[RMDB]
RNA sequence: GGGAACGACUCGAGUAGAGUCGAAAAAAGUUGCACCAGGUACGGAUACCAGACGUUGCCAUACAGGGUGACAUGAGGAUCACCCAUGUACUGUCCCUUGGCAGCCGUACCUGGUGCUGGUGAAAAAUGCAAGAAUAUGAUUCGUCAUAUUCUUGCAAAAAGAAACAACAACAACAAC
Reactivity to 2A3 in 0.01 (KOAc 150mM, MgCl2 10mM, bicine 150mM(pH8.5), 24C), signal-to-noise 1, nucleotides 027 to 126: a000a000g280u100u030g000c010a010c000c000a000g030g000u010a000c010g000g010a010u020a050c030c000a000g020a060c070g120u150u120g050c020c000a030u050a060c030a030g010g000g000u010g010a000c020a080u290g140a170g150g030a080u020c020a050c000c010c010a010u010g000u000a050c070u050g020u040c000c010c000u010u010g010g000c010a000g000c000c000g010u010a010c010c000u000g000g000u000g000c000u010g000g030u090g030a140a000a000a010a000
Reactivity to DMS in 0.01 (KOAc 150mM, MgCl2 10mM, bicine 150mM(pH8.5), 24C), signal-to-noise 8, nucleotides 027 to 126: a080a070g010u010u000g010c000a000c000c010a020g000g010u000a010c010g000g000a060u000a060c010c010a040g000a070c110g010u010u000g020c130c060a110u000a020c040a030g000g000g010u000g000a010c020a140u010g010a170g020g010a200u000c030a020c000c000c000a040u000g010u000a010c260u000g000u000c040c070c030u000u000g010g020c070a030g010c010c010g010u000a000c010c000u000g000g010u000g000c000u000g000g010u010g000a030a060a060a080a120